[RMDB]
RNA sequence: GGGAACGACUCGAGUAGAGUCGAAAAGGCUUUUAUUAAGGGGUGAUGAUGCAGUACAAGGUCAUACUCACAGCAAGGAAAAUGGGCGGCUUUUGCAAGUCCUGCAUUCAAGAGUUCAGCAUGACGAUUGAAGCGAACGAUACCGCCGACGCGGUGGCGACCGCAUGUGAUUCGUCACAUGCGGUCGAAAAGAAACAACAACAACAAC
Reactivity to 2A3 in 0.01 (KOAc 150mM, MgCl2 10mM, bicine 150mM(pH8.5), 24C), signal-to-noise 2, nucleotides 027 to 156: g080g000c030u180u150u030u060a260u220u200a180a090g020g000g020g050u030g030a130u000g000a040u070g000c020a030g020u040a010c040a000a000g040g020u000c010a050u110a180c060u010c070a110c130a060g000c010a000a000g010g010a010a130a220a200u210g060g010g000c030g010g010c010u060u020u140u000g000c010a140a000g050u050c010c010u020g000c030a090u040u090c000a060a000g000a010g140u080u100c010a040g000c030a080u080g030a000c030g040a060u010u020g000a040a000g040c000g070a020a060c040g000a000u080a080c000c000g000c000c080g030a080c030g000c030g010g030u010g000g000

Structure probing data (2A3) for a 207-nucleotide construct. 2A3 adducts were read by reverse transcription with SuperScript II with manganese. The reactions ran in a buffer of 150 mM KOAc, 10 mM MgCl2 and 150 mM bicine (pH 8.5), at 24 C.